[RMDB]
RNA sequence: GGGAACGACUCGAGUAGAGUCGAAAAAGCCUGGUCGAUACGUCGACCAGGCAAUGCCGCCACAACGGCUUCCUGGCGUGGCGGAUCUCAUCCAAUAGAGCAACGCUCCGGAUACGUCCGGAGCGAAAAAAGCUCUGCUUCUUCGGAAGCAGAGCAACAGUAUUAUAAUCUUCGGAUUAUAAUACUGAAAAGAAACAACAACAACAAC
Reactivity to 2A3 in 0.01 (KOAc 150mM, MgCl2 10mM, bicine 150mM(pH8.5), 24C), signal-to-noise 1, nucleotides 027 to 156: a010g300c010c000u000g000g000u000c000g020a010u030a070c140g030u010c000g010a000c000c000a000g000g000c020a000a000u010g010c000c000g010c000c020a030c020a050a030c030g050g040c050u150u140c070c070u030g020g000c030g000u000g000g000c010g000g000a010u030c030u010c010a090u040c010c060a080a200u160a180g070a000g010c020a060a040c020g010c000u000c000c000g020g020a030u040a060c120g040u010c000c000g120g010a000g000c010g000a020a000a000a000a000a000g000c000u010c000u000g000c000u000u010c000u000u000c050g130g000a000a000g000c000a000g010a010g000c000a000a000